[RMDB]
RNA sequence: GGGAACGACUCGAGUAGAGUCGAAAAGAAGUGGCAGGGACAUGCCCCAAAAGCUCGUUCUAGCAACAUAUGUUUGGCUAGUUCGAGCGAUUAGUCUUGAGGAGCGUCCUCUCGCCUUUUCACGAGACACUAUAAAUUUAUUCGUAAAUUUAUAGUGAAAAGAAACAACAACAACAAC
Reactivity to 2A3 in 0.01 (KOAc 150mM, MgCl2 10mM, bicine 150mM(pH8.5), 24C), signal-to-noise 9, nucleotides 027 to 126: g030a020a010g060u050g030g000c010a010g020g010g000a010c030a060u270g020c000c000c000c000a020a030a010a020g000c000u000c000g000u000u000c000u000a000g010c020a020a060c020a100u300a070u300g140u110u090u100g160g020c000u000a000g000u000u000c000g000a000g000c000g000a000u000u060a030g080u030c060u080u090g030a200g020g030a160g020c010g000u000c000c010u060c020u020c050g000c000c000u030u030u010u010c040a040c040g100a070g040a020
Reactivity to DMS in 0.01 (KOAc 150mM, MgCl2 10mM, bicine 150mM(pH8.5), 24C), signal-to-noise 8, nucleotides 027 to 126: g010a040a030g020u000g010g020c010a050g000g000g000a030c030a090u040g010c020c000c010c020a020a060a110a210g010c000u000c000g010u000u000c000u010a000g010c000a040a020c030a190u040a110u070g010u030u000u020g020g020c000u000a000g000u000u010c000g010a010g000c000g000a010u020u030a090g000u030c120u010u000g000a150g000g000a190g010c080g010u000c010c000u010c040u020c140g000c010c010u000u010u000u000c030a160c100g000a140g010a290
The data come from the RNA Mapping Database (RMDB), library OK1LIB. The record gives the reactivity of an RNA of 177 nucleotides to 2A3 and DMS. Values cover nucleotides 27 to 126. The reactions ran in a buffer of 150 mM KOAc, 10 mM MgCl2 and 150 mM bicine (pH 8.5), at 24 C. For 2A3, 43,228 sequencing reads were counted.